This 207-nucleotide RNA was probed chemically with DMS and 2A3. For 2A3 the reverse transcriptase was SuperScript II with manganese.
[RMDB]
RNA sequence: GGGAACGACUCGAGUAGAGUCGAAAAUAACAGGGGAACUCAAUAGAUGAUUUGAAACUACCUGGUGAAUGGAGAACUCAGAUCCUGUGUUGAGAAUUCUCCUUAGAAGGUCAAGGAGAAGGAGGCCCAUUGGGAGGCUAUUGCAGUAAUUGAGUAAGUAUUUAGUGAGGUUCGCCUCACUAAAUACAAAAGAAACAACAACAACAAC
Reactivity to DMS in 0.01 (KOAc 150mM, MgCl2 10mM, bicine 150mM(pH8.5), 24C), signal-to-noise 1, nucleotides 027 to 156: u000a070a140c080a050g030g000g030g040a050a140c080u000c010a030a100u000a140g020a060u000g000a130u010u000u020g000a120a060a200c020u000a110c030c000u000g000g000u030g020a040a110u010g000g000a060g020a060a130c100u000c030a130g010a080u000c020c060u000g030u000g000u010u000g000a040g000a040a170u000u000c010u000c000c000u000u010a050g040a080a040g000g010u000c020a000a050g010g000a090g000a050a110g000g010a120g000g020c050c010c020a160u000u000g030g010g030a060g020g030c000u000a040u000u000g000c020a020g030u000a050a210u000u000g000a100g020u000a080a280
Reactivity to 2A3 in 0.01 (KOAc 150mM, MgCl2 10mM, bicine 150mM(pH8.5), 24C), signal-to-noise 2, nucleotides 027 to 156: u100a040a050c040a030g000g010g010g000a010a000c000u000c020a050a000u010a110g180a060u040g000a010u010u040u060g030a050a080a020c000u120a190c020c010u050g080g070u090g130a060a100u110g000g020a050g020a080a040c030u000c030a010g000a050u050c030c020u080g030u000g040u160u020g000a010g000a030a110u050u020c000u000c000c010u000u040a080g030a080a030g040g000u070c030a050a020g020g010a040g010a060a000g020g010a000g010g010c000c080c000a040u020u070g060g020g000a010g000g000c020u060a050u060u150g020c020a020g020u120a160a060u110u090g030a060g040u040a140a000